Conditions: 150 mM KOAc, 10 mM MgCl2 and 150 mM bicine (pH 8.5), 24 C. The record gives the reactivity of an RNA of 177 nucleotides to 2A3 and DMS. The data come from the RNA Mapping Database (RMDB), library TTRDES.
[RMDB]
RNA sequence: GGGAACGACUCGAGUAGAGUCGAAAAGAUAUGGACUUAUCGAAGAACUCGAACUACGUCAUCCAUUCGGAAACGAAUGGAGACGCGAGGGAGAUAAGUCCUAAGUCAAAAGCCCUGUUCGCAGGGCCAAAGUACCACUGUUCGCAGUGGUACUUUGAAAAGAAACAACAACAACAAC
Reactivity to 2A3 in 0.01 (KOAc 150mM, MgCl2 10mM, bicine 150mM(pH8.5), 24C), signal-to-noise 5, nucleotides 027 to 126: g060a020u070a050u170g000g010a010c010u020u000a000u010c040g190a300a050g040a120a060c010u020c020g000a140a120c150u200a090c300g010u000c020a300u000c010c010a000u000u010c000g020g050a070a080a070c020g010a000a000u010g010g000a000g020a000c010g000c020g010a000g040g030g000a060g000a000u010a000a000g000u000c000c000u000a030a010g030u020c030a030a040a060a080g000c000c000c020u010g030u040u150c300g000c080a000g000g010g030c010
Reactivity to DMS in 0.01 (KOAc 150mM, MgCl2 10mM, bicine 150mM(pH8.5), 24C), signal-to-noise 6, nucleotides 027 to 126: g010a050u000a300u010g020g010a010c000u000u000a000u000c010g010a160a150g010a150a210c000u000c000g000a120a140c170u020a300c040g000u000c000a130u010c010c000a000u000u000c010g010g010a140a090a200c010g010a010a000u000g000g010a020g000a000c020g000c010g010a010g020g000g010a130g000a010u000a010a000g000u000c000c000u000a010a050g000u010c040a070a110a140a170g010c000c000c000u000g010u000u000c200g010c010a020g010g010g020c020